An RNA of 177 nucleotides, treated with 2A3 and DMS and read out base by base. For DMS the reverse transcriptase was MarathonRT.
RNA sequence: GGGAACGACUCGAGUAGAGUCGAAAAGAAUUUACAUCAAGAACAGUGGUGUAGGCGAAAAGACAAGCGAGUCUAAGCAUGAUACUUGCUGUGGUAUCUAUGUAGAUAGGCAGGCUAUCAUAGAAAGAAGAGGAAUAAUAUUCGUAUUAUUCCUCUUAAAAGAAACAACAACAACAAC
Reactivity to 2A3 in 0.01 (KOAc 150mM, MgCl2 10mM, bicine 150mM(pH8.5), 24C), signal-to-noise 9, nucleotides 027 to 126: g080a020a040u090u070u050a040c020a030u030c030a020a090g120a300a110c120a170g120u020g030g000u020g010u030a030g020g030c040g030a140a090a020a000g050a020c060a080a030g060c010g060a020g010u010c020u040a030a030g070c010a030u030g010a010u020a030c000u050u080g050c040u080g070u070g190g010u040a020u000c020u010a080u170g150u100a030g020a100u020a020g010g060c030a000g040g000c010u010a010u060c010a030u050a060g150a050a100a000g150
Reactivity to DMS in 0.01 (KOAc 150mM, MgCl2 10mM, bicine 150mM(pH8.5), 24C), signal-to-noise 9, nucleotides 027 to 126: g010a140a090u020u010u000a010c030a030u000c020a060a100g010a110a130c270a130g020u010g010g010u000g000u000a010g010g010c110g010a070a060a080a110g010a040c050a100a100g010c040g000a080g010u000c010u010a070a150g000c060a020u010g010a020u010a010c020u000u010g000c080u000g010u020g010g020u020a020u000c010u010a070u030g010u020a030g020a050u000a050g000g000c020a020g000g000c160u000a030u000c020a040u010a080g000a080a080a110g010

2A3 adducts were read by reverse transcription with SuperScript II with manganese. For 2A3, 14,562 sequencing reads were counted.